RNA sequence: GGGAACGACUCGAGUAGAGUCGAAAAAGCGUCCACGAACCUUCCAACCUUCCAAAGCAGCAAAAGCUGAACCUUCCAACCUUCCAAUCUACUCGAGAGGAGGAGGAGGAGGAGGAGGAGGAAUUAAGGUAAUAGACAGAUUCGUCUGUCUAUUACCAAAAGAAACAACAACAACAAC
Reactivity to DMS in 0.01 (KOAc 150mM, MgCl2 10mM, bicine 150mM(pH8.5), 24C), signal-to-noise 3, nucleotides 027 to 126: a090g020c100g020u000c010c040a080c100g020a090a140c050c000u010u010c000c010a050a150c050c040u000u010c020c060a090a080a140g020c020a040g030c060a060a050a090a070g020c020u000g000a050a110c060c000u010u000c010c030a090a140c060c010u010u000c010c030a110a230u010c010u000a040c060u000c030g010a030g020a190g000g020a140g020g000a190g000g000a170g000g030a120g000g010a070g000g050a110g000g000a100g010g010a300a080u010u010a030a090
Reactivity to 2A3 in 0.01 (KOAc 150mM, MgCl2 10mM, bicine 150mM(pH8.5), 24C), signal-to-noise 4, nucleotides 027 to 126: a000g060c040g030u000c020c000a030c060g030a060a080c000c010u030u000c030c030a110a100c020c020u050u030c020c020a090a100a070g000c000a010g000c010a000a130a220a140g000c020u020g020a070a050c010c010u050u020c010c030a070a070c020c020u070u010c020c010a040a070u000c010u040a060c030u030c050g020a020g000a020g020g040a030g000g030a050g010g030a050g020g010a050g010g050a030g010g060a030g020g040a030g020g030a020a030u210u090a150a050
Chemical mapping of a 177-nucleotide RNA with DMS and 2A3.
Reactivities are given for positions 27 through 126.
It was measured as part of the RMDB library M2PK90.
The RNA was probed in 150 mM KOAc, 10 mM MgCl2 and 150 mM bicine (pH 8.5) at 24 C.
For DMS the reverse transcriptase was MarathonRT.